Conditions: 150 mM KOAc, 10 mM MgCl2 and 150 mM bicine (pH 8.5), 24 C. This 207-nucleotide RNA was probed chemically with 2A3. Reactivities are given for positions 27 through 156. For 2A3 the reverse transcriptase was SuperScript II with manganese. For 2A3, 845 sequencing reads were counted.
RNA sequence: GGGAACGACUCGAGUAGAGUCGAAAACUCCAAUCGUGCACAGAGUUCAACAGGUCUGGGGUCAAGAUAAGGAGGGUGAGGCAUACCAACCUCAACUUGGCAAUUAGUCUGCCUUCAAACAAGAAGGAGAACAUGAAGUGUGCCCUGUACGACACAGCCUAGGCACACCUUUCGAGGUGUGCCUAGGAAAAGAAACAACAACAACAAC
Reactivity to 2A3 in 0.01 (KOAc 150mM, MgCl2 10mM, bicine 150mM(pH8.5), 24C), signal-to-noise 2, nucleotides 027 to 156: c010u010c000c000a010a050u090c040g070u100g010c020a010c010a020g070a040g050u070u040c000a050a050c000a000g000g080u030c020u000g100g000g010g000u000c010a040a000g010a060u050a180a100g210g000a000g000g110g000u100g070a040g000g010c060a060u120a160c000c000a030a050c000c000u040c000a040a070c000u000u030g040g010c030a080a230u040u010a080g010u080c010u050g070c000c000u020u010c040a130a300a300c040a140a010g000a000a000g000g000a020g030a040a020c010a030u110g110a090a030g020u010g000u000g000c020c000c000u020g030u060a050c060g030a000c050a000c010a130g030